[RMDB]
RNA sequence: GGGAACGACUCGAGUAGAGUCGAAAAGAUAUGGAGUGAGAAGGCUUUUGACGCCAUUCGUGUCGGAAACGACAUCCUUUGGCGAUAAGCCUCUCACUCCUAAGUCAAAGCUCACUUCGGUGAGCAAGAUUCGUAACUACUUCGGUAGUUACGAAUCAAAAGAAACAACAACAACAAC
Reactivity to 2A3 in 0.01 (KOAc 150mM, MgCl2 10mM, bicine 150mM(pH8.5), 24C), signal-to-noise 5, nucleotides 027 to 126: g030a000u030a020u130g010g010a010g020u040g030a010g030a290a180g060g000c040u120u100u220u280g260a170c160g000c010c000a000u020u020c030g000u020g000u010c000g010g010a040a040a030c020g020a010c020a090u220c010c060u020u020u050g020g000c090g080a100u110a270a000g000c010c000u010c000u010c000a000c000u000c000c000u000a000a000g000u000c000a030a060a000g000c000u010c010a000c000u060u160c300g170g000u010g020a000g000c000a000a000
Reactivity to DMS in 0.01 (KOAc 150mM, MgCl2 10mM, bicine 150mM(pH8.5), 24C), signal-to-noise 3, nucleotides 027 to 126: g020a030u000a300u000g000g000a040g020u000g010a000g010a070a050g020g010c010u000u000u010u000g020a190c100g020c000c000a020u000u010c140g000u000g030u010c010g020g010a050a050a160c000g010a030c000a000u010c060c050u000u000u000g020g040c000g010a130u010a000a010g000c010c000u000c010u000c000a000c000u000c000c000u000a010a050g000u000c040a100a170a140g000c000u000c000a000c010u000u020c210g040g000u010g010a010g020c020a020a030
Overview:
An RNA of 177 nucleotides, treated with 2A3 and DMS and read out base by base. 2A3 adducts were read by reverse transcription with SuperScript II with manganese. The 2A3 profile rests on 11,373 reads. The DMS profile rests on 4,348 reads.